[RMDB]
RNA sequence: GGGAACGACUCGAGUAGAGUCGAAAAGGGCAAGUUCGCUUGCCCAAAAACCGUAGGACGGAGAAGUAGGCAUCGAUCCGUAACAUCAUCUUCGAAAGAGGAUGUGGGGGAGCCUACGUAACGUCCUAAACGGAAAAAACGCCAGUUCGCUGGCGAAGAUUUACACCUGUUUCGACAGGUGUAAAUCAAAAGAAACAACAACAACAAC
Reactivity to 2A3 in 0.01 (KOAc 150mM, MgCl2 10mM, bicine 150mM(pH8.5), 24C), signal-to-noise 2, nucleotides 027 to 156: g010g000g000c010a020a000g000u090u070c130g060c130u000u010g000c010c000c000a000a010a000a010a000c000c010g020u000a000g000g010a000c020g010g040a030g000a050a000g010u000a000g020g020c070a210u300c130g070a080u020c040c020g060u120a020a100c010a030u140c000a000u030c020u080u040c120g050a220a080a040g000a010g000g010a010u010g000u030g000g000g040g000g000a000g020c000c000u010a000c010g000u000a000a000c000g000u000c000c000u000a000a000a010c010g010g040a040a000a000a120a000a080c020g000c000c000a010g010u080u070c210g040c090u000g000g000c010g010a010a020
Reactivity to DMS in 0.01 (KOAc 150mM, MgCl2 10mM, bicine 150mM(pH8.5), 24C), signal-to-noise 1, nucleotides 027 to 156: g040g000g090c000a020a050g050u010u000c300g100c010u010u000g000c000c000c040a000a000a060a050a060c010c010g030u000a020g020g000a050c040g000g000a060g030a190a260g040u020a010g010g030c010a190u000c210g000a060u010c000c000g030u000a110a150c020a090u000c030a070u020c040u000u000c070g000a150a130a290g010a130g000g000a000u000g000u000g040g000g020g000g040a140g040c000c000u010a000c000g010u000a050a190c030g030u000c010c000u000a000a010a070c000g000g000a000a040a090a070a070a060c060g030c020c010a000g000u000u000c300g000c000u000g000g000c010g010a040a040